[RMDB]
RNA sequence: GGGAACGACUCGAGUAGAGUCGAAAAGCCGCUGCUGCAGCGCAACAAAUCGGCUCUGGCCGACAUCGGCGCACACCACGUUCUGAUCUACGCGUCAACGCACGACUCUGGCCGUGUGCUGGUAAUGAUUAGGGAUGGAAUUCGUUCCAUCCCUAAUAAAAGAAACAACAACAACAAC
Reactivity to 2A3 in 0.01 (KOAc 150mM, MgCl2 10mM, bicine 150mM(pH8.5), 24C), signal-to-noise 5, nucleotides 027 to 126: g060c010c030g010c040u050g000c060u090g070c060a050g020c010g020c020a000a050c040a040a160a040u060c010g030g000c010u000c090u220g260g030c020c000g060a050c010a060u090c040g030g000c000g000c010a020c010a010c010c010a040c030g010u070u010c050u060g070a120u030c030u150a070c110g040c010g070u060c050a100a060c050g000c030a040c050g060a030c030u020c070u170g080g010c050c040g040u030g010u020g030c020u000g030g000u090a140a120u160g130
Reactivity to DMS in 0.01 (KOAc 150mM, MgCl2 10mM, bicine 150mM(pH8.5), 24C), signal-to-noise 7, nucleotides 027 to 126: g020c050c030g010c050u000g010c100u010g020c060a070g010c030g010c040a100a070c120a050a100a120u000c020g010g000c000u000c170u010g010g010c010c010g010a040c170a050u000c090g010g010c030g000c040a080c080a110c040c040a070c090g000u010u000c050u010g000a080u010c060u010a080c120g000c070g000u010c070a050a080c040g000c020a050c040g000a050c030u010c150u000g020g010c040c050g020u000g010u000g010c020u000g010g000u000a070a100u010g000